[RMDB]
RNA sequence: GGGAACGACUCGAGUAGAGUCGAAAAGCUAAGAUUGCUAGCAAAGCUGCCUACAACGAUAGGCGUCACGCUUGCAUUCUUGUUCAAAGAAAAGAAGGGGUUGCUUACAACCCAAGUGAUCCUGCUGAGCAAACCUAAGGUUCGCCUUAGGUUUGCUAAAAGAAACAACAACAACAAC
Reactivity to DMS in 0.01 (KOAc 150mM, MgCl2 10mM, bicine 150mM(pH8.5), 24C), signal-to-noise 2, nucleotides 027 to 126: g010c030u000a050a050g000a050u010u000g000c000u020a030g000c000a070a300a130g010c000u010g040c000c000u000a000c070a180a140c300g000a210u000a010g000g000c000g010u000c060a150c300g050c000u000u000g000c010a030u000u000c000u010u000g000u040u010c120a140a100a060g010a050a140a130a090g020a070a130g030g020g010g020u000u000g010c080u000u000a130c070a090a080c040c030c030a010a000g020u000g000a030u000c040c000u000g000c130u010g000

Annotation: An RNA of 177 nucleotides, treated with DMS and read out base by base. The DMS profile rests on 785 reads. For DMS the reverse transcriptase was MarathonRT. Conditions: 150 mM KOAc, 10 mM MgCl2 and 150 mM bicine (pH 8.5), 24 C.